[RMDB]
RNA sequence: GGGAACGACUCGAGUAGAGUCGAAAAGUCUUUGGCGUCCUUCGAGGCCGCGGAAGCCGAUUGAAGCGGCGUGACCCCAAGGGUCGACGGGCCGCAAACGGUGGUCCGCAACGACUCAGUAGGUUCUGCAGGCGAAACCACUUCGCGAUUUCGACCCAUCAUGUAACAAUUUCGAUUGUUACAUGAUAAAAGAAACAACAACAACAAC
Reactivity to 2A3 in 0.01 (KOAc 150mM, MgCl2 10mM, bicine 150mM(pH8.5), 24C), signal-to-noise 4, nucleotides 027 to 156: g010u010c050u060u150u180g110g030c060g050u030c020c020u040u080c080g050a160g000g040c020c040g030c010g040g000a050a020g000c020c030g200a270u040u130g130a130a040g010c020g020g000c010g020u010g020a020c000c000c010c060a170a280g050g010g000u020c040g070a190c020g030g140g020c000c010g000c000a070a110a030c070g070g000u060g050g210u000c010c000g000c000a020a010c080g030a020c000u000c010a050g050u040a010g040g010u050u050c030u110g000c040a050g040g070c020g030a030a030a070c060c040a040c120u030u040c050g010c050g090a130u040u070u070c040g000a070c010c010c000
Reactivity to DMS in 0.01 (KOAc 150mM, MgCl2 10mM, bicine 150mM(pH8.5), 24C), signal-to-noise 1, nucleotides 027 to 156: g000u010c030u000u010u000g000g010c010g000u000c010c000u000u060c040g020a140g000g030c000c100g000c060g050g010a170a190g040c010c010g020a190u000u000g010a150a080g000c020g020g030c010g030u000g000a120c000c000c000c070a160a180g090g000g000u000c000g010a100c050g010g010g030c000c010g030c020a040a100a100c150g000g020u000g000g000u000c030c030g010c000a090a120c020g000a030c010u000c010a160g010u000a110g000g010u000u000c000u020g040c060a060g010g040c010g020a060a030a070c020c020a110c040u000u010c020g010c040g020a170u010u000u000c010g000a150c030c020c030
Source information: The record gives the reactivity of an RNA of 207 nucleotides to 2A3 and DMS. For 2A3, 2,891 sequencing reads were counted. DMS (dimethyl sulfate) methylates the pairing face of unpaired adenines and cytosines. The RNA was probed in 150 mM KOAc, 10 mM MgCl2 and 150 mM bicine (pH 8.5) at 24 C.